This 177-nucleotide RNA was probed chemically with DMS and 2A3. The reactions ran in a buffer of 150 mM KOAc, 10 mM MgCl2 and 150 mM bicine (pH 8.5), at 24 C. DMS (dimethyl sulfate) methylates the pairing face of unpaired adenines and cytosines.
RNA sequence: GGGAACGACUCGAGUAGAGUCGAAAACGACAUGGCUUCGGCCAUGUCGAAAGGAGGAGUGAGACCGAAACGGAGGUAGGUCCAACUACCUUCUCACUCAAAAAAUCCGUUUGUUCGCAAACGGAAAGUUAGUUUGCUUGUUCGCAAGCAAACUAACAAAAGAAACAACAACAACAAC
Reactivity to DMS in 0.01 (KOAc 150mM, MgCl2 10mM, bicine 150mM(pH8.5), 24C), signal-to-noise 1, nucleotides 027 to 126: c030g030a030c010a000u000g010g020c000u000u000c170g040g000c010c010a000u000g010u000c000g010a030a030a060g020g010a100g010g010a010g010u010g000a050g040a130c190c110g000a070a150a090c170g020g000a030g000g000u000a000g000g010u000c180c130a080a230c000u000a010c000c000u000u020c000u000c030a010c000u000c010a000a010a090a110a080a140u000c000c000g000u000u000u000g010u000u010c260g020c010a000a000a030c030g040g000a020a010a030
Reactivity to 2A3 in 0.01 (KOAc 150mM, MgCl2 10mM, bicine 150mM(pH8.5), 24C), signal-to-noise 1, nucleotides 027 to 126: c030g000a000c000a000u010g010g000c010u120u060c210g080g000c020c000a010u010g010u000c000g020a010a010a010g050g050a030g070g000a010g000u010g010a020g020a030c080c080g100a160a120a010c120g080g060a010g010g020u010a010g000g060u080c050c000a090a110c000u050a080c000c000u060u030c010u030c000a000c000u000c000a000a040a040a040a000a080u000c000c020g000u000u000u000g050u030u050c300g000c130a000a010a000c010g000g080a030a020a000